Conditions: 150 mM KOAc, 10 mM MgCl2 and 150 mM bicine (pH 8.5), 24 C. This 177-nucleotide RNA was probed chemically with DMS and 2A3. For 2A3, 3,758 sequencing reads were counted. For 2A3 the reverse transcriptase was SuperScript II with manganese. Source: RMDB library RFM100, as collected in RNAgym.

RNA sequence: GGGAACGACUCGAGUAGAGUCGAAAAGAAACCCACCUGGAAACGAGGAACCACCGAGGCCACUCCUACAAGAGGAGAUCGAUAGACUCGGGGUGUACGCGCCAAGGCAACGAGGCGUUGAGCCCGCGUACGGGUAAGUCUUCGGACUUACCCGUACAAAAGAAACAACAACAACAAC
Reactivity to DMS in 0.01 (KOAc 150mM, MgCl2 10mM, bicine 150mM(pH8.5), 24C), signal-to-noise 3, nucleotides 027 to 126: g000a120a090a090c030c000c000a250c090c040u000g000g030a030a130a040c000g050a070g000g000a240a030c030c000a110c030c000g000a030g020g040c020c070a060c030u000c060c010u010a120c290a150a120g000a050g020g000a010g030a090u040c090g000a100u100a060g000a080c030u000c000g030g010g070g000u000g000u000a120c090g000c080g060c000c020a030a230g000g000c220a070a120c000g040a280g000g000c040g010u010u020g000a150g010c160c000c000g010c260
Reactivity to 2A3 in 0.01 (KOAc 150mM, MgCl2 10mM, bicine 150mM(pH8.5), 24C), signal-to-noise 5, nucleotides 027 to 126: g090a050a030a010c000c000c000a030c010c010u020g020g030a060a050a030c020g020a070g040g030a000a030c000c000a160c020c000g010a030g040g020c030c030a020c000u000c000c000u080a140c100a180a070g050a030g240g010a010g000a040u130c080g060a070u050a140g070a040c010u000c030g000g010g000g020u010g010u040a020c050g000c000g000c010c020a030a040g030g000c000a030a020c030g030a040g030g020c010g010u020u100g030a020g020c000c000c000g060c030